This 177-nucleotide RNA was probed chemically with DMS. For DMS, 1,327 sequencing reads were counted. Source: RMDB library M2PK50, as collected in RNAgym. The RNA was probed in 150 mM KOAc, 10 mM MgCl2 and 150 mM bicine (pH 8.5) at 24 C.
RNA sequence: GGGAACGACUCGAGUAGAGUCGAAAACAUCGCGACUUCGGUCGCGAUGAAAGUUGUGCUCCCUCACGCAUAACAAAUCCCAAUGAGGGUAGGAGACUGCAAAACGACACGCCUUCGGGCGUGUCAAAUCACGAAUGCUUUUCGAAGCAUUCGUGAUAAAAGAAACAACAACAACAAC
Reactivity to DMS in 0.01 (KOAc 150mM, MgCl2 10mM, bicine 150mM(pH8.5), 24C), signal-to-noise 2, nucleotides 027 to 126: c000a010u000c000g020c000g050a000c000u000u000c230g050g010u000c000g000c020g000a000u000g010a020a040a100g040u000u000g020u010g010c000u000c050c020c000u000c010a160c110g000c000a010u010a030a050c030a040a190a070u000c010c010c000a070a070u010g000a010g010g010g010u000a020g000g000a130g010a090c090u000g000c120a030a080a130a100c210g010a000c000a000c000g070c000c000u000u020c150g020g000g000c000g080u000g000u000c000a000a010